[RMDB]
RNA sequence: GGGAACGACUCGAGUAGAGUCGAAAAAUUAUGUUUAUGGUAUUGGCCAGCCACUUCUGAAAAAGGACUCCGGGUACUAUAGAUAUGGGUAUUGGGUGAACGGAGAGCGAAAAUCAUCUUGUAUGCAAUACCGGGAAAAUUUCGAUUUUCCCGGUAUAAAAGAAACAACAACAACAAC
Reactivity to DMS in 0.01 (KOAc 150mM, MgCl2 10mM, bicine 150mM(pH8.5), 24C), signal-to-noise 1, nucleotides 027 to 126: a060u000u000a020u020g020u030u000u000a010u010g000g020u010a050u000u000g000g020c060c050a120g000c080c020a060c070u030u000c050u010g020a060a110a070a150a090g010g000a080c020u010c060c070g000g010g010u000a030c040u000a080u010a050g010a030u010a060u010g010g000g030u000a090u000u000g010g020g020u000g000a070a100c100g000g010a040g010a050g040c070g010a050a050a060a050u000c080a050u010c050u000u000g020u010a050u010g020c140a070